[RMDB]
RNA sequence: GGGAACGACUCGAGUAGAGUCGAAAAGAUAUGGACCGAAGAACUACGCAUUGAUAUGCACUCCGAAGAACUAAAUCGGAAACGAUUUAGGGAGGAGUGACAUAUCAAUGCGCUUCGGUCCUAAGUCGUUAGUGUGUAGGUUCGCCUACACACUAACAAAAGAAACAACAACAACAAC
Reactivity to 2A3 in 0.01 (KOAc 150mM, MgCl2 10mM, bicine 150mM(pH8.5), 24C), signal-to-noise 3, nucleotides 027 to 126: g090a040u150a080u230g010g010a000c020c020g000a010a000g010a080a130c250u240a050c300g020c000a000u010u010g010a000u010a000u010g000c000a000c000u010c010c000g300a300a040g000a040a010c000u010a010a000a000u010c000g000g020a090a050a040c010g010a010u010u000u010a010g020g030g000a020g000g000a000g010u000g000a000c000a000u010a000u000c000a000a000u000g020c000g000c000u010u000c000g010g010u000c000c000u000a000a000g020u020c020
Reactivity to DMS in 0.01 (KOAc 150mM, MgCl2 10mM, bicine 150mM(pH8.5), 24C), signal-to-noise 4, nucleotides 027 to 126: g010a110u000a300u020g010g010a030c000c000g030a020a030g030a130a060c180u020a300c020g000c000a000u000u010g010a010u000a000u000g000c000a010c000u000c010c010g000a140a180g010a140a160c000u000a000a010a000u000c000g000g000a100a120a240c010g000a000u000u000u000a010g010g000g000a050g010g020a020g030u000g000a060c020a000u000a000u000c000a000a000u010g000c010g000c010u000u000c000g000g020u000c000c000u000a010a090g010u000c100

Chemical mapping of a 177-nucleotide RNA with 2A3 and DMS.
The data come from the RNA Mapping Database (RMDB), library TTRINS.
For DMS the reverse transcriptase was MarathonRT.
2A3 adducts were read by reverse transcription with SuperScript II with manganese.